[RMDB]
RNA sequence: GGGAACGACUCGAGUAGAGUCGAAAACGGCCAGGGAUGUCUGCGAACUUCCGCAAUGGCACAUCCUUAUACUGAUUCACAGUGAUGUGCCUCCCUGUGCGGAAGGGGACAUUUCACAGGGAGGCCGGCAGACGUGACAAUUCGUUGUCACGUCUGCAAAAGAAACAACAACAACAAC
Reactivity to DMS in 0.01 (KOAc 150mM, MgCl2 10mM, bicine 150mM(pH8.5), 24C), signal-to-noise 2, nucleotides 027 to 126: c090g010g030c020c020a230g010g010g110a010u000g020u000c010u000g020c110g000a110a200c000u000u000c000c000g030c250a270a050u010g020g000c040a010c000a030u000c000c300u010u010a120u010a070c080u000g000a250u000u030c190a090c070a060g000u010g010a050u010g000u000g000c000c000u000c040c030c010u020g000u000g010c020g010g000a040a010g010g020g000g020a040c030a040u010u000u000c020a130c100a220g000g000g000a100g010g020c020c000g000
Reactivity to 2A3 in 0.01 (KOAc 150mM, MgCl2 10mM, bicine 150mM(pH8.5), 24C), signal-to-noise 2, nucleotides 027 to 126: c020g050g010c020c000a040g000g020g070a000u010g020u010c010u110g160c160g160a160a160c010u000u000c000c000g060c050a050a120u090g010g030c010a000c000a020u000c010c000u060u040a140u100a120c070u050g070a160u160u250c120a050c020a260g030u060g050a020u020g000u010g010c000c000u020c020c020c010u100g090u000g000c000g020g010a000a010g050g020g020g000a000c000a000u060u040u000c120a080c010a050g000g060g120a050g000g030c000c000g010
Structure probing data (DMS and 2A3) for a 177-nucleotide construct. Source: RMDB library OK2TRN, as collected in RNAgym. The RNA was probed in 150 mM KOAc, 10 mM MgCl2 and 150 mM bicine (pH 8.5) at 24 C. The 2A3 profile rests on 1,887 reads. DMS adducts were read by reverse transcription with MarathonRT. 2A3 adducts were read by reverse transcription with SuperScript II with manganese.